[RMDB]
RNA sequence: GGGAACGACUCGAGUAGAGUCGAAAAGAACUCACCUUCGGGUGAGUUCAAACGCGAUGAAGCGGCACUUAGACAGCUUCAUACACCUAAGAAGUGCAAUAAAAACAACGCGGUUCGCCGCGUUGAAUCUUAGUGAAUGCUUCGGCAUUCACUAAGAAAAAGAAACAACAACAACAAC
Reactivity to 2A3 in 0.01 (KOAc 150mM, MgCl2 10mM, bicine 150mM(pH8.5), 24C), signal-to-noise 1, nucleotides 027 to 126: g000a000a000c000u000c000a010c000c010u010u050c220g050g000g000u000g000a000g000u020u000c000a010a010a000c020g050c040g050a060u030g000a000a010g000c040g030g000c030a010c050u040u020a040g090a130c010a040g010c000u000u000c000a000u010a010c100a030c010c010u040a070a100g030a060a000g070u010g000c030a050a110u170a140a100a020a020a010c010a000a000c020g010c000g040g030u010u030c230g010c070c010g000c000g020u000u010g000a000a010
Reactivity to DMS in 0.01 (KOAc 150mM, MgCl2 10mM, bicine 150mM(pH8.5), 24C), signal-to-noise 2, nucleotides 027 to 126: g010a030a000c000u000c010a010c000c010u010u010c170g050g000g030u000g010a030g010u010u000c010a060a050a090c200g010c080g000a090u000g010a020a030g000c000g000g050c050a100c030u000u010a080g000a070c090a110g020c030u010u010c010a010u000a050c080a070c000c000u000a130a120g000a140a050g000u010g010c010a150a140u050a070a050a080a130a160c000a030a000c020g010c010g000g010u000u000c270g020c020c010g000c000g000u000u000g010a030a050
Notes:
The record gives the reactivity of an RNA of 177 nucleotides to 2A3 and DMS. Source: RMDB library M2PK50, as collected in RNAgym. High DMS reactivity at an A or C suggests that its Watson-Crick edge is free. The reactions ran in a buffer of 150 mM KOAc, 10 mM MgCl2 and 150 mM bicine (pH 8.5), at 24 C. Values cover nucleotides 27 to 126. For 2A3, 1,818 sequencing reads were counted. The DMS profile rests on 964 reads.